[RMDB]
RNA sequence: GGGAACGACUCGAGUAGAGUCGAAAAACAGAGGUUGAUCCCGACCUAUCUGCUUUCUAUGUUAAGGAUGGUAAAUACUUUACAAGUGAACCACCCGUAACAUAUUCACCAGCUACAAUUUUAGCUGAUACAAGAGGGUUCGCCCUCUUGAAAAGAAACAACAACAACAAC
Reactivity to 2A3 in 0.01 (KOAc 150mM, MgCl2 10mM, bicine 150mM(pH8.5), 24C), signal-to-noise 9, nucleotides 027 to 129: a000c030a010g050a010g030g010u010u010g040a220u050c020c010c000g000a000c010c000u040a180u080c030u030g030c030u040u110u040c030u030a000u000g000u000u000a040a030g010g000a020u010g000g000u050a110a150a060u120a070c010u070u120u100a110c120a140a020g010u000g040a040a010c000c000a000c000c000c000g000u000a000a000c000a000u010a070u110u160c110a090c090c010a010g020c000u040a040c090a250a290u090u090u130u090a010g000c000u010g010a020u040a110
Reactivity to DMS in 0.01 (KOAc 150mM, MgCl2 10mM, bicine 150mM(pH8.5), 24C), signal-to-noise 9, nucleotides 027 to 129: a050c060a050g000a060g020g010u010u010g040a150u000c020c000c000g000a000c020c010u030a110u040c050u000g000c060u010u010u010c040u030a030u000g010u000u010a050a030g020g020a020u010g000g010u000a050a080a050u050a030c020u020u030u090a130c210a100a030g000u000g000a190a030c010c010a020c010c000c000g000u000a000a000c020a010u010a050u040u040c090a090c110c020a040g000c000u020a000c270a110a130u050u010u030u020a000g000c000u000g020a090u030a070